Conditions: 150 mM KOAc, 10 mM MgCl2 and 150 mM bicine (pH 8.5), 24 C.
This 177-nucleotide RNA was probed chemically with 2A3 and DMS.
The 2A3 profile rests on 9,872 reads.
Reactivities are given for positions 27 through 126.
The data come from the RNA Mapping Database (RMDB), library TTRDES.
[RMDB]
RNA sequence: GGGAACGACUCGAGUAGAGUCGAAAAGAUAUGGAUCCGUGCAAGGGAGGCGCUUAUCGGAAACGAUAAGAUGCCGAAGAACUUGAACUACACGGAUCCUAAGUCAAAAGUCCACUUCGGUGGACAACCCAUAGAAGGAGUUCGCUCCUUCUAUGGGAAAAGAAACAACAACAACAAC
Reactivity to 2A3 in 0.01 (KOAc 150mM, MgCl2 10mM, bicine 150mM(pH8.5), 24C), signal-to-noise 4, nucleotides 027 to 126: g020a010u030a010u090g010g010a000u000c010c000g000u000g020c140a240a160g020g090g100a200g020g000c010g000c020u010u000a010u010c000g000g000a020a000a000c020g000a000u010a010a000g110a140u100g000c000c030g040a040a000g030a030a020c120u210u280g040a050a000c020u050a020c060a000c000g000g000a000u000c000c000u000a000a000g000u000c000a000a030a160a150g000u000c000c000a020c010u080u130c300g060g000u010g010g010a010c000a010a040
Reactivity to DMS in 0.01 (KOAc 150mM, MgCl2 10mM, bicine 150mM(pH8.5), 24C), signal-to-noise 3, nucleotides 027 to 126: g000a050u010a130u010g010g010a000u000c000c000g020u000g000c100a040a060g030g020g000a120g010g030c000g000c000u000u000a010u000c000g000g010a030a020a040c000g000a010u010a000a000g010a030u000g060c000c020g030a110a110g000a150a180c210u000u000g010a060a090c020u010a250c010a010c000g000g000a000u000c000c000u000a000a040g000u010c030a040a120a130a150g020u000c000c000a020c000u010u020c200g020g000u010g000g000a010c010a040a070